This 207-nucleotide RNA was probed chemically with 2A3 and DMS. The 2A3 profile rests on 1,235 reads. Source: RMDB library RNAMAK, as collected in RNAgym.
[RMDB]
RNA sequence: GGGAACGACUCGAGUAGAGUCGAAAACCGUAGGAGGAUUGGAGUCGAGAUGGUCGUUUGACGGUGGAUUCGAAAGAGUCCACCCGAGACCAUGUCGACCUUGAAGAUCCUCCUAAACGGAAAGAGCGGUCUUUUUGUUCGCAAAAAGACCGCUCAACUUAUCCCUAUUGUUCGCAAUAGGGAUAAGAAAAGAAACAACAACAACAAC
Reactivity to 2A3 in 0.01 (KOAc 150mM, MgCl2 10mM, bicine 150mM(pH8.5), 24C), signal-to-noise 1, nucleotides 027 to 156: c000c010g010u020a010g000g030a010g000g000a020u000u050g050g030a110g000u000c000g000a010g000a120u010g020g010u020c040g080u150u200u240g020a050c050g000g000u010g000g010a000u000u020c010g010a060a120a070g000a010g010u010c000c020a000c010c010c000g000a000g000a000c020c010a000u030g100u000c010g000a000c010c000u000u070g030a060a020g020a010u000c000c000u010c000c000u000a000a000a000c000g040g060a190a150a180g000a000g000c000g000g000u000c000u000u000u000u000u020g080u120u290c300g010c160a010a000a000a000a010g000a010c030c000g000c000u000c000a000a000
Reactivity to DMS in 0.01 (KOAc 150mM, MgCl2 10mM, bicine 150mM(pH8.5), 24C), signal-to-noise 1, nucleotides 027 to 156: c000c010g000u000a020g000g000a030g040g020a050u000u000g010g010a030g030u000c000g020a060g010a010u010g020g000u000c010g020u000u010u010g030a160c200g000g050u000g030g020a020u030u000c000g010a210a120a300g000a070g030u000c000c010a000c000c000c050g000a110g030a010c010c010a020u000g000u000c000g020a010c010c030u000u020g020a150a300g000a000u000c000c020u000c000c020u000a000a030a040c030g000g000a060a070a140g020a030g020c020g100g030u020c010u000u020u030u000u000g000u000u000c280g000c020a010a010a060a010a010g000a030c010c000g030c000u010c000a010a050